RNA sequence: GGGAACGACUCGAGUAGAGUCGAAAAGUCGCCGCGUCUACAUCAACGCCCAGCGCGGGCGAGGGAAGCGUCCUACGGGGGUGACCCAUUCGCCGGCAUGGGAGAGGACGGCAAGAUUGCCGCGACGCACGCUCGAGGUAUUCGUACCUCGAGCGUGAAAAGAAACAACAACAACAAC
Reactivity to 2A3 in 0.01 (KOAc 150mM, MgCl2 10mM, bicine 150mM(pH8.5), 24C), signal-to-noise 1, nucleotides 027 to 126: g020u020c000g000c020c020g000c000g010u000c020u030a060c020a180u070c010a070a000c090g020c040c000c000a070g000c300g070c150g220g020g000c000g000a030g020g010g000a060a000g000c020g270u140c000c000u050a100c140g050g070g000g000g000u020g010a010c010c020c000a160u100u050c040g000c040c000g070g000c040a020u030g000g060g000a090g030a040g090g010a010c020g040g020c020a000a010g050a050u130u300g020c000c010g000c000g010a000c030g030
Reactivity to DMS in 0.01 (KOAc 150mM, MgCl2 10mM, bicine 150mM(pH8.5), 24C), signal-to-noise 1, nucleotides 027 to 126: g000u000c020g050c000c300g000c010g000u000c000u010a120c040a030u000c060a050a130c080g010c020c000c000a090g000c140g040c040g000g010g010c010g000a040g000g000g000a050a300g010c010g000u010c010c000u010a050c210g050g020g000g040g030u000g000a290c000c000c000a100u000u010c040g000c030c020g000g010c010a080u010g000g020g000a030g000a060g000g000a020c040g010g000c120a070a040g000a050u000u020g070c010c140g010c010g000a010c020g030